The record gives the reactivity of an RNA of 207 nucleotides to 2A3. It was measured as part of the RMDB library M2RFOK. The RNA was probed in 150 mM KOAc, 10 mM MgCl2 and 150 mM bicine (pH 8.5) at 24 C. Values cover nucleotides 27 to 156. 2A3 adducts were read by reverse transcription with SuperScript II with manganese. The 2A3 profile rests on 451 reads.

RNA sequence: GGGAACGACUCGAGUAGAGUCGAAAAUCAGAAUCAGGCCGGAGUGUUUAGCGGUCCGUAAACACGGUCGUACAUCCAGCCGGUAGCCUGGUUCCUUGCAUUGAGUGAUGUACGGAGUUUAUAGAGCAAAAGAAAGACCUGUUCGCAGGUCUUUCAAGUAACCGUAGAACUUCGGUUCUACGGUUACAAAAGAAACAACAACAACAAC
Reactivity to 2A3 in 0.01 (KOAc 150mM, MgCl2 10mM, bicine 150mM(pH8.5), 24C), signal-to-noise 1, nucleotides 027 to 156: u050c010a070g050a020a020u020c000a020g020g050c000c000g000g020a080g140u150g000u050u090u110a030g020c040g030g060u060c000c020g000u030a080a130a000c090a060c070g000g000u030c020g020u020a030c000a070u010c060c050a030g100c010c000g010g010u060a030g050c000c010u000g010g000u010u000c000c040u040u090g010c000a090u010u060g060a020g120u110g010a020u040g020u050a020c070g090g010a050g020u130u120u060a180u190a020g030a000g180c050a000a010a100a070g010a030a000a000g010a010c000c000u010g010u040u080c280g000c150a000g000g000u010c000u010u010u010c000a000a000